[RMDB]
RNA sequence: GGGAACGACUCGAGUAGAGUCGAAAAGUGGGUGCCUCUGUCGAAAUUUUAUACACUGUGUCUUAUUCCGGAAACACCUAGGGUUCAACAAUCCAUUAAAUAUGGCUCAGUGCCUUCUGGGACUUUUUAACUCAGCCCAAUACCUAGACCUCAGUUCACCAAGAGUAACAUUCGUGUUACUCUUGGUAAAAGAAACAACAACAACAAC
Reactivity to 2A3 in 0.01 (KOAc 150mM, MgCl2 10mM, bicine 150mM(pH8.5), 24C), signal-to-noise 2, nucleotides 027 to 156: g060u050g000g020g030u020g020c030c000u050c020u020g040u020c030g040a030a070a060u170u180u140u130a100u100a050c040a000c020u060g030u000g020u030c040u060u070a050u080u090c030c030g010g080a050a090a020c040a020c060c020u050a050g010g070g010u050u070c020a050a070c020a030a100u010c010c010a030u000u220a050a080a140u140a060u070g000g020c000u000c090a020g040u000g080c000c020u090u050c060u060g040g040g000a080c000u120u200u020u030u060a070a040c030u060c030a040g020c000c000c000a020a040u100a060c000c000u010a020g070a070c000c010u030c020a060g040u100u060c010
Reactivity to DMS in 0.01 (KOAc 150mM, MgCl2 10mM, bicine 150mM(pH8.5), 24C), signal-to-noise 1, nucleotides 027 to 156: g050u000g020g030g050u000g000c040c010u000c030u000g000u000c070g010a110a070a150u000u020u020u020a110u000a150c000a060c030u000g010u000g030u010c020u000u000a120u000u000c020c070g020g010a050a070a110c080a040c000c060u000a060g040g020g040u010u000c120a050a090c070a050a160u000c060c020a100u000u000a020a060a120u000a060u000g020g000c000u000c020a060g010u000g030c000c080u000u000c040u000g010g020g010a060c040u020u070u000u010u030a030a110c060u010c050a120g000c000c010c010a090a060u010a050c010c050u000a060g010a050c020c010u000c020a120g000u000u010c040